[RMDB]
RNA sequence: GGGAACGACUCGAGUAGAGUCGAAAACGCAGAGGGUUCUGAUAACAAAGAACCUAGAUAGCCGCAUCGGUAUUAUGGGAUGUAGUCGGUGAGCCGGAAUGCCUGCAUCGUAAGCCUAUAAGUAAAUUUAAGUGUAAUCACUUCGGUGAUUACACAAUCCAUAGUAUCGCUUCGGCGAUACUAUGGAAAAAGAAACAACAACAACAAC
Reactivity to 2A3 in 0.01 (KOAc 150mM, MgCl2 10mM, bicine 150mM(pH8.5), 24C), signal-to-noise 1, nucleotides 027 to 156: c130g040c050a040g000a030g090g000g000u000u000c020u090g010a110u180a140a080c080a020a080a060g000a000a000c000c000u020a000g000a150u030a000g100c010c030g060c040a020u110c040g040g000u080a060u190u130a070u150g030g030g030a000u010g010u030a040g020u020c040g020g000u060g020a000g090c000c050g000g000a100a020u030g000c000c000u000g030c000a020u000c010g020u080a110a000g110c010c010u020a010u010a130a030g080u070a040a060a300u230u200u160a230a000g000u000g000u000a060a000u000c000a000c000u050u020c160g080g000u000g000a000u000u000a000c000a040c000a000a000